[RMDB]
RNA sequence: GGGAACGACUCGAGUAGAGUCGAAAACUGCGGCAGACGCCCCUCUCCGCGCCUGCAGGUGCGGGGUGGGGGAGAAAGGUCAUCCCUGGAGAGGCCCGGGGCUGGCGGGAAUCCUCGGCGGGCGGGGCCAUGGUCCUGCAUUCGUGCAGGACCAUGGAAAAGAAACAACAACAACAAC
Reactivity to DMS in 0.01 (KOAc 150mM, MgCl2 10mM, bicine 150mM(pH8.5), 24C), signal-to-noise 1, nucleotides 027 to 126: c080u000g030c080g010g050c050a150g000a170c120g000c030c010c000c010u000c020u000c000c010g020c000g010c030c000u020g050c300a160g020g000u010g030c000g000g000g020g020u000g020g020g010g000g000a010g000a070a090a100g030g010u010c050a080u000c010c020c030u020g000g010a230g000a190g020g000c100c030c080g000g020g000g020c070u000g000g040c050g000g030g000a190a060u010c090c050u000c060g000g000c090g000g000g000c050g000g020g000g010
Source: RMDB library OK2TST, as collected in RNAgym. An RNA of 177 nucleotides, treated with DMS and read out base by base. For DMS, 963 sequencing reads were counted. Conditions: 150 mM KOAc, 10 mM MgCl2 and 150 mM bicine (pH 8.5), 24 C.